Conditions: 150 mM KOAc, 10 mM MgCl2 and 150 mM bicine (pH 8.5), 24 C. The record gives the reactivity of an RNA of 177 nucleotides to 2A3 and DMS. Reactivities are given for positions 27 through 126.
RNA sequence: GGGAACGACUCGAGUAGAGUCGAAAACGAUCUGUUGGGCGACCUGGGCGGUACCGCGCGCGCCGAGCGUGCGAAGCUUGUCGAGUGGUUGCUCGAGCAGGGCAUCACCCCCGACGAGAUUCGGGCGGAGCGGUACAGAAUUCGUUCUGUACCGCUCAAAAGAAACAACAACAACAAC
Reactivity to 2A3 in 0.01 (KOAc 150mM, MgCl2 10mM, bicine 150mM(pH8.5), 24C), signal-to-noise 2, nucleotides 027 to 126: c020g030a090u060c010u020g020u030u030g050g000g000c010g010a020c010c000u030g050g000g000c030g000g010u040a060c070c020g000c000g000c010g010c010g000c100c150g070a020g000c000g010u030g000c000g020a040a020g000c030u290u300g010u030c030g040a130g130u080g010g010u020u000g000c020u020c000g010a020g000c040a020g000g000g030c040a040u080c040a110c010c020c010c010c010g010a010c020g080a060g010a130u070u040c010g010g010g000c110g060
Reactivity to DMS in 0.01 (KOAc 150mM, MgCl2 10mM, bicine 150mM(pH8.5), 24C), signal-to-noise 3, nucleotides 027 to 126: c090g010a070u000c020u020g020u010u000g000g010g030c010g030a050c030c020u000g030g020g020c020g000g000u010a090c300c020g000c000g020c000g000c020g010c200c200g000a210g000c000g040u000g040c000g000a090a290g000c010u000u010g040u000c010g010a140g050u000g000g000u000u000g010c000u000c000g000a060g000c050a030g010g000g000c080a090u010c100a120c010c010c000c010c000g000a050c020g000a180g000a210u010u000c000g010g010g010c160g000
Notes
For 2A3, 4,138 sequencing reads were counted. For DMS, 3,097 sequencing reads were counted. For DMS the reverse transcriptase was MarathonRT. For 2A3 the reverse transcriptase was SuperScript II with manganese. Source: RMDB library OK2TRN, as collected in RNAgym.